Overview: Chemical mapping of a 177-nucleotide RNA with 2A3 and DMS. For 2A3 the reverse transcriptase was SuperScript II with manganese. Values cover nucleotides 27 to 126.
[RMDB]
RNA sequence: GGGAACGACUCGAGUAGAGUCGAAAAACUUUACAUAUGUGAUAUUUAUGAUCUUGUUAGACUGGUAAUUACAAAGUGCCCUAGGAGGCUAGGAGGACUGACCAAGAGAGAAGGGAAAGCAUUUUGUGUUUAGAUCAAGAUUCGUCUUGAUCUAAACAAAAGAAACAACAACAACAAC
Reactivity to 2A3 in 0.01 (KOAc 150mM, MgCl2 10mM, bicine 150mM(pH8.5), 24C), signal-to-noise 8, nucleotides 027 to 126: a000c020u110u140u130a050c020a060u140a100u100g090u050g050a060u050a110u130u140u060a140u170g060a080u040c020u050u060g050u080u050a020g040a100c030u020g040g030u060a110a150u090u050a060c060a060a090a050g030u070g040c010c000c000u020a080g000g070a060g040g080c030u020a020g020g030a040g020g010a020c040u040g030a040c000c020a060a000g030a000g020a010g010a050a050g040g010g020a020a040a020g030c040a070u020u040u080u110g130u010
Reactivity to DMS in 0.01 (KOAc 150mM, MgCl2 10mM, bicine 150mM(pH8.5), 24C), signal-to-noise 7, nucleotides 027 to 126: a070c040u010u010u020a090c050a080u010a070u010g000u020g000a080u010a040u020u020u000a050u020g000a100u010c030u000u020g010u000u010a060g010a110c040u000g010g010u000a050a060u020u020a090c150a040a040a040g010u000g010c010c010c010u000a050g010g010a130g010g010c040u010a020g010g010a080g010g010a040c050u010g000a070c100c050a060a070g010a100g000a070g010a050a040g010g000g010a030a050a050g020c090a080u010u010u000u000g010u010